[RMDB]
RNA sequence: GGGAACGACUCGAGUAGAGUCGAAAAGAUAUGGAACGGCACGGGAGCGAUGUAUCGGAAACGAUAUUUCGCAUCGAUCGUGCGUUCCUAAGUCAAACGCUUUCCGGAGUUCGCUCCGGAAAGCGAACUUAGUAAGUGCCUUCGGGCACUUACUAAGAAAAGAAACAACAACAACAAC
Reactivity to 2A3 in 0.01 (KOAc 150mM, MgCl2 10mM, bicine 150mM(pH8.5), 24C), signal-to-noise 1, nucleotides 027 to 126: g000a000u020a000u050g010g030a000a000c050g300g000c030a000c000g020g030g030a120g010c000g020a000u030g010u020a000u020c010g000g020a010a030a010c010g000a000u010a000u030u000u000c020g030c030a060u300c080g030a030u010c000g020u010g000c010g000u020u000c000c000u010a020a010g000u000c020a110a050a140c030g000c010u000u000u000c000c000g000g020a020g010u080u180c300g010c180u020c000c000g020g030a000a010a000g000c010g010a010a000
Reactivity to DMS in 0.01 (KOAc 150mM, MgCl2 10mM, bicine 150mM(pH8.5), 24C), signal-to-noise 2, nucleotides 027 to 126: g000a000u000a070u010g000g000a010a030c020g010g010c020a020c000g000g010g000a030g040c010g010a020u000g000u000a000u000c010g000g000a010a030a030c000g000a010u000a010u000u000u000c000g010c010a300u000c210g000a050u000c010g010u010g000c010g020u000u000c010c000u000a010a090g000u010c020a140a140a240c040g000c010u000u010u000c000c010g030g020a010g030u010u020c270g010c010u000c010c010g000g000a000a010a000g010c000g020a010a030
The data come from the RNA Mapping Database (RMDB), library TTRDES. Structure probing data (2A3 and DMS) for a 177-nucleotide construct. For DMS, 2,313 sequencing reads were counted.